[RMDB]
RNA sequence: GGGAACGACUCGAGUAGAGUCGAAAAUUUAACAAGUUACUUAGCAGCCUAUCGGUCUUUCAGAGCAAAUAGGUUUAUAUUUGAAGCUUAGUUCUAAUCCAUACCAUGGCAGUUUUCAAAUUUCCUGAUAUGUUUUUACCUUGUCCAGUGUUAGGAAUACGCAGUACAAUUUCGAUUGUACUGCGUAAAAAGAAACAACAACAACAAC
Reactivity to 2A3 in 0.01 (KOAc 150mM, MgCl2 10mM, bicine 150mM(pH8.5), 24C), signal-to-noise 1, nucleotides 027 to 156: u190u220u140a110a030c060a040a050g020u060u060a060c020u000u130a010g050c030a030g000c010c000u050a030u090c050g120g110u030c060u050u210u150c100a090g020a030g090c010a010a010a070u010a000g000g000u010u210u050a130u080a080u050u090u180g080a060a000g040c000u000u030a000g000u060u000c020u090a080a020u030c040c030a030u040a160c030c030a020u020g030g030c020a080g020u080u040u120u170c090a130a100a110u030u050u060c010c000u030g060a070u020a030u220g090u040u030u010u060u020a070c000c020u090u070g040u050c040c030a040g000u000g040u120u070a030g000g040a040a030
Reactivity to DMS in 0.01 (KOAc 150mM, MgCl2 10mM, bicine 150mM(pH8.5), 24C), signal-to-noise 1, nucleotides 027 to 156: u010u000u000a030a100c050a070a060g000u000u000a070c030u010u010a070g060c120a150g000c000c020u000a020u040c030g030g020u010c030u000u020u020c160a200g000a110g060c070a110a030a030u000a040g020g040u020u020u000a130u000a060u030u000u010g000a060a130g000c030u010u010a060g000u000u010c060u000a010a100u010c130c030a110u010a090c050c030a070u000g000g000c020a100g010u000u000u000u000c050a050a070a140u010u000u000c010c020u000g040a000u000a050u010g020u010u010u000u000u000a130c120c050u010u010g010u000c050c010a170g030u010g010u010u000a050g020g020a110a170
An RNA of 207 nucleotides, treated with 2A3 and DMS and read out base by base.
The reactions ran in a buffer of 150 mM KOAc, 10 mM MgCl2 and 150 mM bicine (pH 8.5), at 24 C.
For DMS the reverse transcriptase was MarathonRT.
For 2A3, 714 sequencing reads were counted.